[RMDB]
RNA sequence: GGGAACGACUCGAGUAGAGUCGAAAAGAUAUGGAUUAUCACGGCUCAACAGCUCGGAAACGAGACAUGAGUGGCCGUGAGUAAUCCUAAGUCAAAAUCUCUGGAAACCUUCGGGUUUCCAGAGAAACUGUGUGUUAUAGUUCGCUAUAACACACAGAAAAGAAACAACAACAACAAC
Reactivity to 2A3 in 0.01 (KOAc 150mM, MgCl2 10mM, bicine 150mM(pH8.5), 24C), signal-to-noise 3, nucleotides 027 to 126: g020a000u080a030u180g000g000a010u010u010a000u020c000a000c000g000g000c020u030c260a020a170c000a080g010c010u000c000g020g020a060a060a020c010g010a010g110a060c160a300u180g060a110g130u110g020g000c010c020g000u010g000a010g000u010a000a010u000c000c000u010a130a020g020u020c000a000a020a090a300u000c010u000c000u000g010g040a000a010a010c000c000u050u090c300g080g000g000u000u000u020c000c010a010g000a000g010a000a000a000
Reactivity to DMS in 0.01 (KOAc 150mM, MgCl2 10mM, bicine 150mM(pH8.5), 24C), signal-to-noise 3, nucleotides 027 to 126: g010a030u000a300u000g010g010a010u000u000a010u000c000a010c010g000g000c000u000c080a090a120c050a110g000c010u010c000g000g000a130a080a200c010g000a010g000a070c060a100u000g000a130g020u010g010g000c020c000g010u000g000a020g000u000a000a000u000c000c000u000a030a110g010u000c050a070a060a150a150u010c000u010c000u000g000g000a010a010a010c000c000u010u010c210g030g000g000u000u000u000c000c000a000g010a000g000a010a040a040

Structure probing data (2A3 and DMS) for a 177-nucleotide construct. DMS adducts were read by reverse transcription with MarathonRT. The 2A3 profile rests on 4,897 reads. For 2A3 the reverse transcriptase was SuperScript II with manganese. The RNA was probed in 150 mM KOAc, 10 mM MgCl2 and 150 mM bicine (pH 8.5) at 24 C. The data come from the RNA Mapping Database (RMDB), library TTRDEL.